[RMDB]
RNA sequence: GGGAACGACUCGAGUAGAGUCGAAAAGAUAUGGAAGUACUGUAGUGUCUCAGUGUACUAGAGCGAUGAAAGGCUUCGGAAACGAAGCCUGGAGCUCAUACACUGAGACACCGUACUUCCUAAGUCAGUAAUACGCUUGGUUCGCCAAGCGUAUUACAAAAGAAACAACAACAACAAC
Reactivity to 2A3 in 0.01 (KOAc 150mM, MgCl2 10mM, bicine 150mM(pH8.5), 24C), signal-to-noise 1, nucleotides 027 to 126: g020a050u100a050u070g020g000a010a000g020u030a000c080u180g210u300a300g000u060g030u010c010u010c020a000g000u030g000u010a190c300u300a300g000a000g030c050g300a300u110g020a040a080a010g000g000c000u010u000c000g000g120a070a190a080c010g000a000a010g010c080c000u030g000g020a010g070c010u000c030a010u000a000c000a010c050u020g020a010g010a000c000a000c020c000g000u030a000c010u000u000c000c010u000a020a010g020u040c020a000
Reactivity to DMS in 0.01 (KOAc 150mM, MgCl2 10mM, bicine 150mM(pH8.5), 24C), signal-to-noise 2, nucleotides 027 to 126: g020a060u000a300u030g000g000a020a030g000u000a000c000u000g040u000a120g050u000g010u000c000u000c000a000g020u010g020u000a020c300u010a170g010a010g010c000g030a110u020g010a130a170a010g000g000c000u000u000c000g020g000a120a090a110c000g000a010a000g000c000c000u000g000g040a080g030c020u000c000a240u000a000c020a020c010u010g000a010g000a000c030a000c000c030g000u000a020c000u000u010c000c000u000a000a040g020u020c060a120
An RNA of 177 nucleotides, treated with 2A3 and DMS and read out base by base. The data come from the RNA Mapping Database (RMDB), library TTRINS. The DMS profile rests on 1,775 reads. The RNA was probed in 150 mM KOAc, 10 mM MgCl2 and 150 mM bicine (pH 8.5) at 24 C.